[RMDB]
RNA sequence: GGGAACGACUCGAGUAGAGUCGAAAAGAUAUGGAUGUAAGUGCUUUUGACGCUCCAGGCACAUCGGAAACGAUGUGGAGGAGCGAUAAGCACUACAUCCUAAGUCAAAGACCACUUCGGUGGUCAAGGCAUUAUCCUAGUUCGCUAGGAUAAUGCCAAAAGAAACAACAACAACAAC
Reactivity to 2A3 in 0.01 (KOAc 150mM, MgCl2 10mM, bicine 150mM(pH8.5), 24C), signal-to-noise 4, nucleotides 027 to 126: g030a030u100a030u170g010g000a000u010g020u060a270a300g030u000g030c020u060u090u200u260g190a150c050g000c010u010c000c020a090g300g300c030a000c010a000u000c000g000g000a060a090a050c030g000a000u010g000u020g000g030a130g010g000a000g000c000g000a000u000a010a000g000c000a000c000u000a000c000a000u000c010c000u000a080a020g000u010c030a110a060a160g020a020c000c020a010c020u050u100c300g160g000u030g010g000u000c020a000a030
Reactivity to DMS in 0.01 (KOAc 150mM, MgCl2 10mM, bicine 150mM(pH8.5), 24C), signal-to-noise 2, nucleotides 027 to 126: g010a040u000a300u010g010g000a000u010g010u000a030a100g050u010g000c000u000u000u000u000g040a260c140g010c010u000c020c000a080g010g000c000a000c000a010u000c000g020g020a110a090a210c000g000a010u000g000u000g000g000a300g010g000a020g050c000g000a000u000a000a020g000c010a010c010u000a020c010a000u000c000c010u000a000a080g000u000c030a140a090a110g000a020c030c000a000c000u010u010c220g040g020u000g000g000u000c010a100a050
An RNA of 177 nucleotides, treated with 2A3 and DMS and read out base by base.
The reactions ran in a buffer of 150 mM KOAc, 10 mM MgCl2 and 150 mM bicine (pH 8.5), at 24 C.
DMS adducts were read by reverse transcription with MarathonRT.
The data come from the RNA Mapping Database (RMDB), library TTRDES.
Values cover nucleotides 27 to 126.